Overview
The record gives the reactivity of an RNA of 177 nucleotides to DMS and 2A3. For DMS, 4,102 sequencing reads were counted. For 2A3, 1,471 sequencing reads were counted.
RNA sequence: GGGAACGACUCGAGUAGAGUCGAAAAGGCAUGGUGGCUCACGCCUGUAAUCCCAGCACUUAGGGAGGCCAAGGCGGGUGGAUCACGAGGUCAAGAGAUCGAGACCAUCCUGGCCAACGUGGUGAAACCACGCAGAGGAGUUCGCUCCUCUGCGUGGAAAAGAAACAACAACAACAAC
Reactivity to DMS in 0.01 (KOAc 150mM, MgCl2 10mM, bicine 150mM(pH8.5), 24C), signal-to-noise 2, nucleotides 027 to 126: g010g010c060a060u010g010g030u000g010g000c040u000c010a040c040g010c000c000u000g020u000a050a080u000c000c000c000a060g020c070a030c040u000u020a150g020g000g010a130g010g030c050c040a030a040g020g010c070g020g000g010u000g000g000a040u000c020a030c010g000a080g000g010u010c040a040a070g000a050g000a060u010c030g000a070g000a030c030c010a020u000c010c020u010g020g000c000c010a010a030c030g000u000g000g000u000g000a050a050a160
Reactivity to 2A3 in 0.01 (KOAc 150mM, MgCl2 10mM, bicine 150mM(pH8.5), 24C), signal-to-noise 1, nucleotides 027 to 126: g030g000c000a000u050g040g070u020g060g050c020u050c140a020c010g020c000c000u000g060u120a090a090u010c030c030c010a030g100c030a030c020u060u250a040g080g020g000a020g000g010c040c010a030a040g300g050c030g000g030g030u010g000g030a220u040c010a000c050g010a020g010g010u080c110a190a030g100a030g000a140u070c040g020a010g010a060c020c000a000u000c050c030u020g000g000c000c010a050a050c000g140u030g000g040u060g000a080a000a080
2A3 adducts were read by reverse transcription with SuperScript II with manganese.
The RNA was probed in 150 mM KOAc, 10 mM MgCl2 and 150 mM bicine (pH 8.5) at 24 C.